The data come from the RNA Mapping Database (RMDB), library OK2TST. Chemical mapping of a 177-nucleotide RNA with 2A3 and DMS.
RNA sequence: GGGAACGACUCGAGUAGAGUCGAAAAGACCGGAUCGGCGGUGCGCGGAUCACCGCGGCCAGUUUCGUCAUGCUGGCGGCCGGGGCGGCUGCGGCGUUGUGGUCGGUGCAGUCGGUCAAUCUGCCGGCCAUAGACGCAUGUUCGCAUGCGUCUAUGGAAAAGAAACAACAACAACAAC
Reactivity to 2A3 in 0.01 (KOAc 150mM, MgCl2 10mM, bicine 150mM(pH8.5), 24C), signal-to-noise 4, nucleotides 027 to 126: g020a020c030c040g030g020a120u090c040g070g000c030g050g140u120g030c300g000c050g150g010a070u090c040a030c090c020g010c000g000g020c010c010a010g000u030u050u160c060g070u050c040a060u140g030c010u050g020g030c000g000g000c040c010g030g000g010g010c010g000g000c000u010g000c010g060g000c060g030u050u130g090u080g080g050u050c040g010g070u010g000c010a000g010u020c010g020g120u030c000a000a060u040c040u080g040c000c020g020g020
Reactivity to DMS in 0.01 (KOAc 150mM, MgCl2 10mM, bicine 150mM(pH8.5), 24C), signal-to-noise 4, nucleotides 027 to 126: g010a120c040c020g000g000a060u010c050g030g030c010g010g020u000g000c070g010c080g010g010a130u010c090a030c000c010g020c020g010g000c010c010a040g010u000u000u000c110g010u010c120a090u010g010c030u000g010g010c020g020g020c080c120g000g000g000g010c020g010g000c010u000g000c020g000g000c100g010u000u010g020u000g010g010u000c000g010g010u000g020c020a050g000u010c020g020g010u000c040a080a100u000c060u000g010c020c020g010g010